The record gives the reactivity of an RNA of 177 nucleotides to DMS and 2A3. DMS adducts were read by reverse transcription with MarathonRT. Values are in units of 0.01, from 0 to 300, in steps of 10. The RNA was probed in 150 mM KOAc, 10 mM MgCl2 and 150 mM bicine (pH 8.5) at 24 C.
RNA sequence: GGGAACGACUCGAGUAGAGUCGAAAAGAUAUGGAUUUCCUUCGAUAAGCUUUCAUCGGAAACGAUGGGAAGCUUUUGACGAAGGUAGUCCUAAGUCAAAACCAACAGCGGUUCGCCGCUGUUGGAACGGGAAUAAAGUGUUCGCACUUUAUUCCCGAAAAGAAACAACAACAACAAC
Reactivity to DMS in 0.01 (KOAc 150mM, MgCl2 10mM, bicine 150mM(pH8.5), 24C), signal-to-noise 2, nucleotides 027 to 126: g000a020u000a200u020g000g000a020u020u000u000c000c000u000u010c000g020a160u010a030a010g000c000u000u000u010c000a000u000c000g010g010a050a040a040c000g020a020u010g010g030g030a010a010g010c000u000u000u010u000g000a140c070g000a020a010g000g040u000a000g020u000c000c000u000a040a100g010u020c000a090a090a130a140c000c000a020a000c000a010g000c000g010g000u000u020c250g020c020c000g020c000u000g010u000u000g000g000a010a030
Reactivity to 2A3 in 0.01 (KOAc 150mM, MgCl2 10mM, bicine 150mM(pH8.5), 24C), signal-to-noise 1, nucleotides 027 to 126: g010a020u050a020u080g000g000a010u020u000u040c020c000u000u000c060g120a260u100a300a000g000c000u000u000u020c000a000u010c010g010g000a060a020a020c020g010a020u030g110g020g080a000a000g030c000u020u020u020u060g020a000c020g010a000a000g030g000u010a000g000u000c010c000u010a040a010g040u000c010a010a030a100a200c010c020a000a000c000a000g000c010g060g040u080u200c250g060c100c000g010c000u010g000u010u010g010g000a010a020